[RMDB]
RNA sequence: GGGAACGACUCGAGUAGAGUCGAAAAGCUGUCGGCGUACCGCUACCUCGAUGCGCGCCGCGACGUGAUCGACGAGGAAGCCAAGGCGCGGCCGCUGAUCCGAUUGUGGGACAAGAACAUGCAGUACAUCGGCACCGUGGCCGCCGAGAAGUCGGUCGAUGAUUAGCACAUUCGUGUGCUAAUCAUCAAAAGAAACAACAACAACAAC
Reactivity to 2A3 in 0.01 (KOAc 150mM, MgCl2 10mM, bicine 150mM(pH8.5), 24C), signal-to-noise 3, nucleotides 027 to 156: g110c050u070g050u100c030g080g080c010g000u040a100c010c050g000c010u090a140c020c030u100c040g140a100u180g010c000g030c010g000c020c040g100c060g040a060c080g040u040g000a050u080c020g060a020c000g000a070g070g070a070a020g040c040c030a080a030g040g000c050g000c000g000g010c000c000g000c010u020g010a200u000c000c000g010a030u110u160g050u010g020g080g050a080c050a090a050g110a160a060c080a130u180g060c000a030g060u090a010c000a040u010c010g030g010c090a000c020c010g010u020g020g010c010c020g000c000c020g020a030g020a080a010g080u080c010g000g000u020c000
Reactivity to DMS in 0.01 (KOAc 150mM, MgCl2 10mM, bicine 150mM(pH8.5), 24C), signal-to-noise 1, nucleotides 027 to 156: g030c030u020g040u010c090g000g030c010g030u000a060c050c040g000c040u000a130c130c050u000c070g020a120u000g040c070g010c050g010c030c070g010c150g000a030c040g010u000g010a030u000c010g010a040c050g030a140g010g030a190a170g010c010c020a170a120g030g020c070g020c020g010g060c050c010g060c010u010g010a060u010c040c000g000a090u010u020g010u000g000g040g030a300c100a140a140g030a100a080c180a080u000g010c020a210g030u000a130c010a100u010c000g000g030c030a070c010c130g000u000g020g080c020c050g000c010c030g080a050g020a080a150g010u000c080g020g000u000c030
Chemical mapping of a 207-nucleotide RNA with 2A3 and DMS. The DMS profile rests on 1,974 reads. The data come from the RNA Mapping Database (RMDB), library OK3TST. The reactions ran in a buffer of 150 mM KOAc, 10 mM MgCl2 and 150 mM bicine (pH 8.5), at 24 C.